[RMDB]
RNA sequence: GGGAACGACUCGAGUAGAGUCGAAAAGACGCCUGUGUGGCGAAUCGAGCAAUGGUAUAAGCCGCAAUAGAAGAUGAGAUGGAAGCGGCAAGAUAGAAUGCUCGCAACCAGAUCCAUCUCACAGAGACGAUCCUGCGGGAUUCGUCCCGCAGGAUCGAAAAGAAACAACAACAACAAC
Reactivity to 2A3 in 0.01 (KOAc 150mM, MgCl2 10mM, bicine 150mM(pH8.5), 24C), signal-to-noise 1, nucleotides 027 to 126: g050a010c000g050c060c000u110g000u000g050u160g300g030c000g100a050a050u000c050g000a000g000c120a080a140u210g000g140u150a110u030a300a000g000c000c040g000c030a000a000u270a210g120a060a000g170a300u080g000a000g000a000u000g000g000a040a040g000c030g000g000c000a090a000g040a000u050a000g140a180a010u080g010c000u000c170g020c070a040a000c000c000a000g000a190u000c000c000a000u000c030u000c000a010c040a000g040a000g000a000

Chemical mapping of a 177-nucleotide RNA with 2A3. It was measured as part of the RMDB library OK1LIB. For 2A3 the reverse transcriptase was SuperScript II with manganese. Values cover nucleotides 27 to 126.